[RMDB]
RNA sequence: GGGAACGACUCGAGUAGAGUCGAAAAUGUGCGCACGUGCAGGGAGUGAGGGGCUGGAGGGAGGCAGGUGGCCACCGCUUCUGUGUUGGCGUCACCUGGUCAGCUGCCCUCCUAGGGCAGUGCAGCCCCCGUUUAAAUUGUUCGCAAUUUAAACGGGAAAAGAAACAACAACAACAAC
Reactivity to DMS in 0.01 (KOAc 150mM, MgCl2 10mM, bicine 150mM(pH8.5), 24C), signal-to-noise 3, nucleotides 027 to 126: u010g000u010g010c080g010c080a070c090g020u000g010c090a100g020g000g010a110g000u010g000a150g010g000g000g030c040u000g010g010a110g040g020g020a100g010g020c010a010g020g010u000g000g010c000c010a060c040c000g000c050u010u010c240u020g010u000g010u000u000g000g000c220g030u000c020a030c040c000u000g010g010u000c060a240g010c010u000g000c010c010c000u010c090c100u010a060g010g010g010c010a030g020u000g010c050a080g010c020c030
Reactivity to 2A3 in 0.01 (KOAc 150mM, MgCl2 10mM, bicine 150mM(pH8.5), 24C), signal-to-noise 2, nucleotides 027 to 126: u120g040u020g000c050g000c050a050c070g050u110g070c050a020g030g000g000a100g060u140g060a120g030g000g010g030c050u040g050g050a080g060g090g020a030g030g050c010a000g000g020u020g020g010c020c010a030c030c000g020c050u270u130c120u280g100u020g040u060u110g020g010c010g100u100c000a010c010c000u020g040g040u040c000a030g000c000u130g030c000c000c010u040c020c020u030a020g000g000g000c030a040g010u020g000c020a040g000c010c020